[RMDB]
RNA sequence: GGGAACGACUCGAGUAGAGUCGAAAAAGAAUAGUUUUCGAACUAUUCUCACGACGACCUUGGGAAACCCUGAGGCGCGAUCCCACGCGAUCGUGUGUUCGAACACCUGGUUGUUCGCAACCAGGAAUGAUUACUGUCGUUUCGACGACAGUAAUCAAAAAGAAACAACAACAACAAC
Reactivity to 2A3 in 0.01 (KOAc 150mM, MgCl2 10mM, bicine 150mM(pH8.5), 24C), signal-to-noise 2, nucleotides 027 to 126: a000g000a000a000u010a010g010u010u030u080u200c220g030a000a000c000u010a000u020u000c010u010c030a060c030g090a020c030g150a140c000c000u030u010g050g020g020a180a300a130c040c000c000u030g020a020g020g000c000g000c010g010a040u000c000c030c020a050c060g030c060g050a050u040c000g000u020g010u040g070u090u140c060g050a070a030c020a040c080c020u000g010g010u030u000g030u070u050c280g000c080a000a000c000c000a020g010g060a030a030
Reactivity to DMS in 0.01 (KOAc 150mM, MgCl2 10mM, bicine 150mM(pH8.5), 24C), signal-to-noise 3, nucleotides 027 to 126: a050g000a020a000u010a000g010u000u010u010u000c120g000a030a010c000u010a020u020u000c000u000c040a090c000g010a050c050g000a160c090c000u010u020g020g000g000a140a110a100c260c010c020u000g000a010g000g010c020g010c010g000a060u000c000c010c070a240c100g000c040g010a070u000c010g010u010g010u000g020u010u010c080g010a140a060c240a130c000c010u000g000g000u000u000g000u010u000c220g020c020a000a020c010c000a010g010g000a040a040